This 207-nucleotide RNA was probed chemically with 2A3 and DMS. The DMS profile rests on 5,326 reads. Conditions: 150 mM KOAc, 10 mM MgCl2 and 150 mM bicine (pH 8.5), 24 C. The data come from the RNA Mapping Database (RMDB), library OK3TST.
RNA sequence: GGGAACGACUCGAGUAGAGUCGAAAAUUAGGUCCUUAGAAGAGAAGAGACAGGGAGAGUAGGUAGAAUGUGUCCUGAAACUUGAAACACCAGGAUUCUAUUCCUGCUUCUGCCAUUAGGAGCUAUUUGACCUCAAGUCUGUCCUAGAAUCUCCCUAUAUGGUCCUAGUAUUCGUACUAGGACCAUAAAAAGAAACAACAACAACAAC
Reactivity to 2A3 in 0.01 (KOAc 150mM, MgCl2 10mM, bicine 150mM(pH8.5), 24C), signal-to-noise 3, nucleotides 027 to 156: u080u040a040g050g020u000c010c030u020u020a050g060a220a040g040a050g050a130a010g090a000g010a090c110a090g030g000g010a070g000a010g020u060a010g020g000u020a020g060a080a060u110g020u010g010u010c010c000u040g040a150a160a110c100u150u180g100a140a060a030c040a030c080c000a010g020g010a010u080u030c030u030a080u080u090c030c020u010g000c000u170u050c000u030g070c010c000a020u030u020a020g010g000a020g020c020u030a070u160u100u140g010a020c010c000u060c020a050a010g030u000c020u090g050u000c020c010u040a040g020a090a090u010c020u010c020c000c000u080a040
Reactivity to DMS in 0.01 (KOAc 150mM, MgCl2 10mM, bicine 150mM(pH8.5), 24C), signal-to-noise 3, nucleotides 027 to 156: u000u000a050g020g030u000c000c020u010u010a120g020a160a150g010a210g000a090a120g000a120g010a110c050a040g010g020g010a150g020a100g030u000a040g000g010u010a100g020a090a070u000g030u000g000u000c000c030u000g000a100a080a140c190u000u000g030a170a090a150c070a120c110c020a050g010g030a060u010u000c060u010a120u000u000c010c030u000g030c010u000u000c010u000g010c010c080a200u000u000a030g020g040a090g000c040u000a070u000u000u000g010a070c030c000u000c070a060a100g030u000c020u000g040u000c020c000u000a060g020a110a140u000c030u000c010c000c000u000a210